[RMDB]
RNA sequence: GGGAACGACUCGAGUAGAGUCGAAAAAGCAUGCCGUACGGAAACCAUCCCAGAACGUCCAGCGUACGGAAACCAUCCCCUGGGCAUGCGAAAGGAUGGUUGUCCAUCCGAAACGUACGUAGUCGGCAUGCGAAAGGAUGGCUGAUACGUACGGAAACUAUCCGUGCUUGUUCGCAAGCACGGAUAGAAAAGAAACAACAACAACAAC
Reactivity to DMS in 0.01 (KOAc 150mM, MgCl2 10mM, bicine 150mM(pH8.5), 24C), signal-to-noise 1, nucleotides 027 to 156: a180g000c020a100u010g010c000c020g070u000a190c030g010g000a230a180a050c020c050a070u000c030c020c010a210g020a120a070c080g010u000c010c020a110g000c110g040u000a140c000g000g020a090a080a060c020c020a160u000c010c000c030c050u000g080g000g000c020a070u000g060c090g020a140a150a080g000g010a030u000g010g020u000u000g000u010c020c000a170u000c030c060g030a060a070a100c020g000u000a000c000g070u000a050g020u000c030g000g000c020a060u010g000c020g000a070a100a050g020g000a090u000g010g000c000u000g000a160u000a030c000g000u000a010c010g050g000a150a100a210
Reactivity to 2A3 in 0.01 (KOAc 150mM, MgCl2 10mM, bicine 150mM(pH8.5), 24C), signal-to-noise 3, nucleotides 027 to 156: a000g030c020a020u060g020c000c010g050u050a030c010g040g020a020a040a030c010c010a040u030c020c000c000a030g070a120a010c050g040u050c030c020a040g020c030g070u070a040c010g060g000a100a030a020c050c030a080u070c010c010c000c040u050g000g030g000c030a030u100g010c020g060a070a000a000g020g000a000u010g010g010u040u070g080u040c000c070a070u030c030c040g070a090a040a060c000g000u010a000c010g010u010a020g090u060c050g000g000c020a030u090g010c010g010a040a010a000g020g010a020u040g050g000c050u020g040a050u040a130c000g000u010a000c000g000g040a090a030a000